[RMDB]
RNA sequence: GGGAACGACUCGAGUAGAGUCGAAAACAGGCCGGGCACCGCGACGCGCUACCUGACCACGGCGCCGACACCGUCCUCGCCGAUCUGGACGAGGUGCGGGUGCGCGCCGGCGACCGGCACAUGUCCGGCUGCACGGCCGUUUCGACGGCCGUGCAGCAAAAGAAACAACAACAACAAC
Reactivity to 2A3 in 0.01 (KOAc 150mM, MgCl2 10mM, bicine 150mM(pH8.5), 24C), signal-to-noise 1, nucleotides 027 to 126: c070a000g050g000c000c030g000g000g030c030a030c000c000g180c110g110a120c000g170c000g070c020u130a130c030c020u120g110a300c040c080a010c070g030g000c090g000c110c080g010a000c030a000c000c000g000u050c000c000u000c000g010c000c000g080a250u140c200u300g130g000a170c000g000a080g000g000u230g300c070g000g000g000u010g070c030g000c000g070c010c000g020g000c000g080a000c010c040g030g000c110a000c020a110u100g050u120c060c010g000

The record gives the reactivity of an RNA of 177 nucleotides to 2A3. As a SHAPE reagent, 2A3 marks flexible, mostly unpaired nucleotides at the ribose 2'-OH. Conditions: 150 mM KOAc, 10 mM MgCl2 and 150 mM bicine (pH 8.5), 24 C.